This 207-nucleotide RNA was probed chemically with 2A3. The data come from the RNA Mapping Database (RMDB), library ARCHII. Conditions: 150 mM KOAc, 10 mM MgCl2 and 150 mM bicine (pH 8.5), 24 C. Values cover nucleotides 27 to 156. The 2A3 profile rests on 562 reads.
RNA sequence: GGGAACGACUCGAGUAGAGUCGAAAAUCCCCCACCUGAGGGAUGAAGCGCGAGAUCUAAUUCAGGUUAGCCAUUCGUUAGCGUGUCGGUUCGCAGGCGGUGGUGAAAUUAAAGAUCGACUAAGCAUGUAGUACCAAAGAUGAAUGGUUUUCGGACGCCUGCUUUAACGGUUCGCCGUUAAAGCAGGAAAAGAAACAACAACAACAAC
Reactivity to 2A3 in 0.01 (KOAc 150mM, MgCl2 10mM, bicine 150mM(pH8.5), 24C), signal-to-noise 1, nucleotides 027 to 156: u020c000c000c010c000c050a050c010c120u000g000a020g000g000g030a000u090g060a000a040g070c100g090c140g140a060g010a140u060c010u150a070a000u040u000c020a010g050g000u000u020a010g000c020c000a050u200u170c170g020u070u070a040g000c000g000u020g050u080c010g010g010u060u120c010g010c010a000g000g050c010g000g000u030g000g010u020g000a060a000a000u230u250a070a000a000g000a000u020c010g010a000c050u070a070a000g050c020a090u080g040u170a010g000u030a040c000c000a010a020a060g040a070u120g030a070a120u040g010g040u080u090u110u090c000g000g010a020c000g010